[RMDB]
RNA sequence: GGGAACGACUCGAGUAGAGUCGAAAAACGCGGAGUACGCUCCGCGACAACACUUCUUUCGACCCGCUAACCGAGACCUAUGGGUCGUUAUAUUACGUCUCUAUCUUACUCACAUAACAUCGCACAAAAAACGUGGUUCGGUUCGCCGAACCACGAACGUUCUUCCAGAGUUCGCUCUGGAAGAACGAAAAGAAACAACAACAACAAC
Reactivity to 2A3 in 0.01 (KOAc 150mM, MgCl2 10mM, bicine 150mM(pH8.5), 24C), signal-to-noise 2, nucleotides 027 to 156: a000c020g000c010g000g010a000g000u040a050c180g030c020u000c010c000g010c020g050a010c010a080a000c010a020c060u140u160c000u120u090u030c000g000a000c000c000c010g000c120u120a100a060c080c050g030a020g020a070c030c020u100a040u160g020g010g000u000c000g010u020u040a090u020a030u100u120a030c030g020u010c000u000c010u010a080u060c100u090u110a060c020u090c080a060c010a150u110a160a040c040a170u170c070g030c110a000c080a060a060a000a060a050a030c030g010u000g000g000u000u010c010g000g020u020u070c180g010c030c010g010a000a000c000c000a000c010g000a000a000